RNA sequence: GGGAACGACUCGAGUAGAGUCGAAAAGGCAACCCCGACAACGUCGGCGCCUACCGGUCGUUGGCGCUGGAGCUGGUCGCUCAGCUUGGCCGGAUCGAUGUCCUGGUGUGCUCGGUGGGGACGGGUGCAUUAUGGCCCGUUUCGACGGGCCAUAAUGAAAAGAAACAACAACAACAAC
Reactivity to 2A3 in 0.01 (KOAc 150mM, MgCl2 10mM, bicine 150mM(pH8.5), 24C), signal-to-noise 1, nucleotides 027 to 126: g010g000c050a110a000c020c000c020c020g020a020c040a270a040c070g050u030c010g030g000c040g020c030c020u020a070c030c010g000g030u050c010g070u040u160g040g040c070g000c080u080g140g010a030g010c020u070g050g100u270c100g020c050u130c000a010g020c000u080u080g060g010c010c020g000g050a040u100c040g030a070u090g090u120c030c050u030g000g070u090g020u030g000c030u040c100g000g090u070g040g030g000g010a000c010g000g020g040u120g020
Reactivity to DMS in 0.01 (KOAc 150mM, MgCl2 10mM, bicine 150mM(pH8.5), 24C), signal-to-noise 3, nucleotides 027 to 126: g000g030c060a090a110c120c120c010c010g020a080c060a080a080c070g010u010c020g000g010c130g030c050c030u010a090c080c050g010g000u000c040g010u000u010g030g010c060g020c050u010g020g030a040g000c010u000g010g010u000c250g020c070u010c010a070g010c050u000u010g010g000c010c020g010g000a110u010c070g010a090u000g000u000c020c020u000g030g020u000g020u000g000c050u000c050g020g020u000g000g000g010g000a120c070g010g000g010u000g020
Structure probing data (2A3 and DMS) for a 177-nucleotide construct. For 2A3, 1,619 sequencing reads were counted. Conditions: 150 mM KOAc, 10 mM MgCl2 and 150 mM bicine (pH 8.5), 24 C. Source: RMDB library OK2TRN, as collected in RNAgym.